[RMDB]
RNA sequence: GGGAACGACUCGAGUAGAGUCGAAAAGAUAUGGACCUUGACAUGAUGAGAGGUCGGAAACGACCUUUCUAUCAACAGCAAGUGUCCUAAGUCAAAACCUGAUUGGACCUUCGGGUCCAAUCAGGAAUCACCUCAAUCUGUUCGCAGAUUGAGGUGAAAAAGAAACAACAACAACAAC
Reactivity to 2A3 in 0.01 (KOAc 150mM, MgCl2 10mM, bicine 150mM(pH8.5), 24C), signal-to-noise 1, nucleotides 027 to 126: g030a000u050a030u110g000g020a000c000c000u000u010g060a130c030a170u130g000a000u020g010a040g010a010g030g030u000c020g010g000a060a060a010c010g010a000c000c000u000u000u000c030u110a040u030c040a000a170c010a010g010c000a000a020g010u000g060u300c000c000u010a120a020g030u010c050a010a040a090a190c020c010u040g000a000u010u000g000g000a000c050c010u010u040c300g100g000g030u000c000c000a010a000u010c000a010g000g000a000a000
Reactivity to DMS in 0.01 (KOAc 150mM, MgCl2 10mM, bicine 150mM(pH8.5), 24C), signal-to-noise 1, nucleotides 027 to 126: g010a070u000a300u000g000g000a000c000c000u000u000g000a070c040a180u000g020a020u000g000a000g040a000g020g010u010c000g010g020a060a050a180c000g010a000c000c000u010u000u000c000u000a020u000c010a040a050c300a130g010c010a000a000g010u010g020u000c000c000u000a050a090g000u000c060a090a060a140a180c010c000u020g000a000u000u000g010g010a040c020c000u000u030c160g050g040g000u000c000c010a000a000u000c020a020g010g000a030a030
This 177-nucleotide RNA was probed chemically with 2A3 and DMS. For DMS, 1,233 sequencing reads were counted. It was measured as part of the RMDB library TTRDEL. The 2A3 profile rests on 2,625 reads. DMS (dimethyl sulfate) methylates the pairing face of unpaired adenines and cytosines.